Annotation: The record gives the reactivity of an RNA of 177 nucleotides to DMS and 2A3. The 2A3 profile rests on 1,178 reads. Source: RMDB library OK2TST, as collected in RNAgym.
RNA sequence: GGGAACGACUCGAGUAGAGUCGAAAAGAAGAACUUCAAUGGCACUGAUAGUAUAGUCCGGAGUAUGGAAGUUCAAGAUCAUGUAAUCGAGAAAGCUGAAAAUAUCACUCCUGGCAUCAAAUGUGCCGAUACUAGCGCUUUUCGAAGCGCUAGUAUCAAAAGAAACAACAACAACAAC
Reactivity to DMS in 0.01 (KOAc 150mM, MgCl2 10mM, bicine 150mM(pH8.5), 24C), signal-to-noise 2, nucleotides 027 to 126: g000a100a080g010a080a060c090u010u000c050a070a210u010g000g000c000a000c000u000g010a180u010a090g000u010a090u000a090g020u000c000c070g020g000a040g010u000a060u010g000g000a120a030g010u000u010c050a040a220g000a030u000c100a100u000g000u010a040a060u000c050g000a300g010a030a070a080g010c020u000g010a140a070a080a060u000a090u000c160a050c010u000c000c000u010g000g000c000a040u000c070a040a100a140u000g000u000g000c020c000
Reactivity to 2A3 in 0.01 (KOAc 150mM, MgCl2 10mM, bicine 150mM(pH8.5), 24C), signal-to-noise 2, nucleotides 027 to 126: g080a070a040g020a070a010c030u060u030c110a090a180u110g000g000c000a000c010u060g010a140u080a160g100u150a010u020a050g000u000c030c030g010g000a010g020u000a030u030g040g040a000a000g000u000u020c020a000a010g010a010u020c010a020u150g180u260a190a040u010c020g000a010g030a020a090a030g050c050u060g090a060a040a090a030u150a060u090c010a010c010u000c000c030u020g000g000c010a020u020c030a040a100a060u110g000u000g000c000c000